[RMDB]
RNA sequence: GGGAACGACUCGAGUAGAGUCGAAAAAGAGUUCGCUUCGGCGAACUCUACAACGGGAAAAGGGCCUCCCGGAAAGAUAAGGCGGAUUCCGUCCAAGCGCCGAGAGUGGUGCGUUCGCGCACCACAACUCUAUGGAAGGAUUCGUCCUUCCAUAGAGAAAAGAAACAACAACAACAAC
Reactivity to DMS in 0.01 (KOAc 150mM, MgCl2 10mM, bicine 150mM(pH8.5), 24C), signal-to-noise 4, nucleotides 027 to 126: a040g000a020g000u000u000c010g030c000u010u020c190g020g020c000g010a010a000c000u000c000u000a040c130a070a130c030g000g000g010a030a050a080a120g010g000g000c020c040u000c010c010c000g020g010a050a060a290g010a110u010a050a060g010g000c010g010g010a220u000u000c030c010g010u000c010c080a090a100g000c100g020c020c010g000a110g000a170g010u010g000g000u000g000c000g020u000u010c150g000c010g000c010a010c010c000a000c010a040a080
Reactivity to 2A3 in 0.01 (KOAc 150mM, MgCl2 10mM, bicine 150mM(pH8.5), 24C), signal-to-noise 4, nucleotides 027 to 126: a000g000a000g000u000u000c000g010c030u050u090c180g050g010c010g000a010a000c010u000c000u000a000c000a040a010c010g000g000g030a020a070a100a170g100g040g010c010c010u000c000c010c000g010g050a110a100a010g070a080u150a090a100g010g000c050g040g060a290u300u090c030c010g010u010c030c030a040a010g070c030g000c160c020g050a050g020a010g050u020g040g000u000g030c020g010u020u050c200g000c000g000c050a000c010c000a000c000a010a010